[RMDB]
An RNA of 177 nucleotides, treated with DMS and read out base by base. Reactivities are rounded to 0.1 and cut off at 0 and 3. DMS adducts were read by reverse transcription with MarathonRT. Source: RMDB library TTRINS, as collected in RNAgym.
RNA sequence: GGGAACGACUCGAGUAGAGUCGAAAAGAUAUGGAUCACGCAGUCAAAGAUACUUGGACAUGCUGUGGUGUCGGAAACGACACGCACAGCAACAGCCAAGGUAUCUUUGACUGCGUGAUCCUAAGUCCUAAUAGCGAAUCUUCGGAUUCGCUAUUAGAAAAGAAACAACAACAACAAC
Reactivity to DMS in 0.01 (KOAc 150mM, MgCl2 10mM, bicine 150mM(pH8.5), 24C), signal-to-noise 2, nucleotides 027 to 126: g000a110u000a260u010g000g020a000u010c000a010c000g040c000a030g000u000c000a020a020a000g000a000u010a010c010u000u000g000g000a040c090a300u010g000c010u000g040u000g020g000u000g000u000c010g000g000a170a110a240c000g000a000c000a000c000g020c000a000c000a010g000c010a020a040c300a230g010c000c000a010a010g000g000u000a000u000c000u000u000u010g010a020c000u000g010c000g050u000g000a010u000c000c000u000a010a040g010u000c040